[RMDB]
RNA sequence: GGGAACGACUCGAGUAGAGUCGAAAAACCUUUGUGGAUUGUGGCAUAAGACAUGCGAAUGCAUGAGAUCCCAUUGGGAUCUGAACAUUCGCAACAGCUUAUGCGUAACAUCAAUCCACUCUGGUAAAAGCGUACUACACUUCGGUGUAGUACGCAACACGGUAAGUCUGUUCGCAGACUUACCGUGAAAAGAAACAACAACAACAAC
Reactivity to DMS in 0.01 (KOAc 150mM, MgCl2 10mM, bicine 150mM(pH8.5), 24C), signal-to-noise 2, nucleotides 027 to 156: a050c000c000u000u010u000g010u000g040g010a000u000u000g100u000g020g060c000a010u000a010a000g020a120c080a300u010g000c010g020a020a000u000g040c000a160u010g010a080g010a020u000c000c000c000a300u000u010g090g040g000a010u000c000u010g000a140a010c010a000u000u020c020g020c010a040a070c120a230g000c000u000u000a000u010g000c000g010u010a100a070c040a060u010c000a000a010u000c000c000a000c010u000c030u000g010g000u010a050a100a130a120g020c010g080u000a020c000u000a020c000a020c000u000u000c300g000g050u020g030u010a010g020u000a000c020g000c020a000a020
Reactivity to 2A3 in 0.01 (KOAc 150mM, MgCl2 10mM, bicine 150mM(pH8.5), 24C), signal-to-noise 3, nucleotides 027 to 156: a010c010c000u020u010u010g000u010g000g000a000u010u000g000u020g050g010c010a000u000a010a010g050a130c030a070u020g010c000g000a000a000u020g020c110a100u300g070a010g010a030u010c000c000c100a280u180u300g000g000g000a000u000c000u000g020a090a030c000a000u000u000c000g020c000a010a020c030a030g020c000u000u000a000u000g000c000g000u040a030a010c010a070u170c020a010a010u000c000c000a000c000u010c000u000g030g020u050a100a140a050a000g010c000g000u000a000c000u000a000c000a010c000u040u100c210g000g000u010g000u000a000g000u000a000c010g010c000a000a000
The record gives the reactivity of an RNA of 207 nucleotides to DMS and 2A3. For 2A3, 4,088 sequencing reads were counted. It was measured as part of the RMDB library RNAMAK. For 2A3 the reverse transcriptase was SuperScript II with manganese. The reactions ran in a buffer of 150 mM KOAc, 10 mM MgCl2 and 150 mM bicine (pH 8.5), at 24 C. DMS adducts were read by reverse transcription with MarathonRT.